The record gives the reactivity of an RNA of 177 nucleotides to DMS and 2A3.
[RMDB]
RNA sequence: GGGAACGACUCGAGUAGAGUCGAAAAUCAUGGGUCGACCCCAAAGUCUAUUCUCCAUCGCUGAAGCAUGGAAGACAAAUACCCUUCACUUCUUCAGAGGCAUAACACAUGCACUUCUCUUGUCAUGCCUCUUGGACAGAUUCGUCUGUCCAAGAGGAAAAGAAACAACAACAACAAC
Reactivity to DMS in 0.01 (KOAc 150mM, MgCl2 10mM, bicine 150mM(pH8.5), 24C), signal-to-noise 2, nucleotides 027 to 126: u000c100a100u000g000g000g000u010c020g020a070c090c000c000c080a060a060a100g010u000c040u000a130u010u000c120u000c020c020a020u010c110g030c040u000g030a060a110g010c120a040u000g000g010a040a000g000a090c130a060a050a110u000a120c120c070c040u020u000c040a090c060u000u000c040u000u020c080a050g010a150g000g020c060a030u000a010a030c100a080c200a080u010g000c080a090c110u010u050c060u000c050u010u000g020u000c060a030u000g000
Reactivity to 2A3 in 0.01 (KOAc 150mM, MgCl2 10mM, bicine 150mM(pH8.5), 24C), signal-to-noise 2, nucleotides 027 to 126: u050c010a040u130g000g000g000u060c030g020a100c040c020c000c000a030a020a000g040u000c000u020a130u150u090c050u050c020c020a020u050c040g030c060u240g080a160a030g030c030a000u030g000g050a070a000g020a030c040a040a180a010u200a050c020c020c000u030u080c090a100c070u080u070c000u050u040c010a000g020a040g040g080c020a040u040a150a070c100a010c010a110u040g010c020a050c080u130u030c020u030c010u010u100g040u040c010a030u080g050

Conditions: 150 mM KOAc, 10 mM MgCl2 and 150 mM bicine (pH 8.5), 24 C.